[RMDB]
Chemical mapping of a 177-nucleotide RNA with 2A3 and DMS. The DMS profile rests on 2,061 reads. The RNA was probed in 150 mM KOAc, 10 mM MgCl2 and 150 mM bicine (pH 8.5) at 24 C. Source: RMDB library M2PK90, as collected in RNAgym.

RNA sequence: GGGAACGACUCGAGUAGAGUCGAAAAAAGUUGCACCAGGUACGGAUACCAGACGUUGCCAAACAGGGUGACAUGAGGAUCACCCUUGUACUGUCCCUUGGCAGCCGUACCUGGUGCUGGUGAAAAAGUUAUGCCAAGAGUUCGCUCUUGGCAUAACAAAAGAAACAACAACAACAAC
Reactivity to 2A3 in 0.01 (KOAc 150mM, MgCl2 10mM, bicine 150mM(pH8.5), 24C), signal-to-noise 1, nucleotides 027 to 126: a000a000g270u120u030g000c010a020c000c000a020g030g000u000a010c000g010g020a050u060a130c000c040a000g070a050c040g080u050u090g040c030c010a060a010a020c040a040g030g000g000u010g010a030c050a130u300g190a090g110g060a040u020c010a030c010c000c010u000u040g010u000a020c030u060g010u030c000c030c000u000u010g040g000c020a000g010c000c000g000u000a020c000c000u000g000g000u000g000c000u000g000g030u130g040a140a020a000a000a000
Reactivity to DMS in 0.01 (KOAc 150mM, MgCl2 10mM, bicine 150mM(pH8.5), 24C), signal-to-noise 2, nucleotides 027 to 126: a090a080g000u000u000g010c000a000c020c000a000g000g000u000a000c000g000g010a130u010a120c110c070a070g010a070c170g020u000u000g010c030c060a020a050a020c050a030g000g000g010u000g000a020c030a140u000g020a100g000g020a250u000c010a010c010c000c000u000u010g020u000a050c170u000g000u000c000c020c010u000u000g000g020c010a160g010c000c000g000u000a010c010c000u000g000g010u000g010c000u010g000g010u000g000a050a050a040a080a110